[RMDB]
RNA sequence: GGGAACGACUCGAGUAGAGUCGAAAAGAUAUGGACGACAGGAAACGUCGCGCCAUGUCGGAAACGACAUGGGCGAACUACGACUCGCCUGUCGUCCUAAGUCAAAAGCUCAAGUUCGCUUGAGCAAGAGACGUAUAUACUUCGGUAUAUACGUCUCAAAAGAAACAACAACAACAAC
Reactivity to DMS in 0.01 (KOAc 150mM, MgCl2 10mM, bicine 150mM(pH8.5), 24C), signal-to-noise 5, nucleotides 027 to 126: g010a050u000a280u010g000g010a010c000g010a010c010a010g000g000a110a100a100c230g010u000c010g020c000g010c000c000a000u010g000u010c000g000g000a060a050a120c000g010a020c000a000u000g000g010g020c010g020a080a070c150u010a140c060g010a050c060u000c300g000c000c000u000g000u000c000g010u000c000c000u000a000a080g010u000c040a070a060a100a120g010c000u000c000a010a000g010u000u010c240g020c010u000u000g000a010g020c000a060a060
Reactivity to 2A3 in 0.01 (KOAc 150mM, MgCl2 10mM, bicine 150mM(pH8.5), 24C), signal-to-noise 5, nucleotides 027 to 126: g000a010u030a010u070g000g000a000c000g000a000c000a000g040g090a060a250a070c180g060u070c070g030c010g040c020c000a000u000g010u010c000g000g020a030a030a000c010g010a000c000a010u040g100g080g040c020g040a070a040c070u240a090c170g130a050c030u030c120g020c010c010u000g000u010c010g000u000c000c000u000a000a000g000u000c000a000a020a030a090g000c000u010c010a010a010g020u070u140c240g050c180u000u000g000a000g000c000a000a000
Background:
Chemical mapping of a 177-nucleotide RNA with DMS and 2A3. The data come from the RNA Mapping Database (RMDB), library TTRDEL. DMS adducts were read by reverse transcription with MarathonRT. Reactivities are given for positions 27 through 126. High 2A3 reactivity points to a flexible backbone, as in loops and unpaired stretches.